Annotation
Structure probing data (DMS and 2A3) for a 207-nucleotide construct. For DMS, 2,230 sequencing reads were counted.
RNA sequence: GGGAACGACUCGAGUAGAGUCGAAAAAGUUCGCGCUUCCGUGAAACGCGAAAAUCGGACGGUGGCUGCAAGUCGCAUCGCAAAACCGCGGCAAGUGGAGUCAGCGAGAGGAGGCUGGGUUUUGGCUAGAACACACGGUACUUCGGUACCGUGUGAAUACUAGCUUUAGCUUCGGCUAAAGCUAGUAAAAAGAAACAACAACAACAAC
Reactivity to DMS in 0.01 (KOAc 150mM, MgCl2 10mM, bicine 150mM(pH8.5), 24C), signal-to-noise 1, nucleotides 027 to 156: a130g000u000u010c010g030c000g000c000u000u000c060c260g000u030g020a070a090a000c000g030c000g030a030a020a050a070u000c090g030g020a250c080g020g030u000g010g020c010u010g010c000a060a130g010u020c000g050c010a090u010c070g060c050a050a110a060a160c030c200g010c000g000g000c030a100a180g000u000g020g030a140g010u000c030a050g030c020g020a100g050a090g030g000a070g010g030c030u000g010g030g030u000u020u000u000g040g030c020u000a130g010a090a170c010a010c000a000c000g000g030u000a020c010u000u010c300g040g000u010a000c000c000g000u010g020u000g000a060a030
Reactivity to 2A3 in 0.01 (KOAc 150mM, MgCl2 10mM, bicine 150mM(pH8.5), 24C), signal-to-noise 2, nucleotides 027 to 156: a000g070u040u020c010g010c000g000c050u080u050c090c070g140u120g030a030a040a040c010g000c010g020a040a010a000a050u100c060g030g050a010c010g020g050u020g040g040c040u110g010c040a070a030g000u040c000g040c050a040u100c050g030c100a040a070a040a030c070c080g010c020g030g000c050a180a000g020u060g060g000a000g020u020c030a020g030c020g040a030g000a020g040g000a020g010g020c040u050g030g050g000u050u060u070u050g040g000c020u090a060g070a190a000c000a000c000a010c020g000g010u030a000c000u050u030c160g090g000u000a000c000c000g000u000g000u000g000a000a000
Background: Values cover nucleotides 27 to 156. Source: RMDB library M2RFPK, as collected in RNAgym.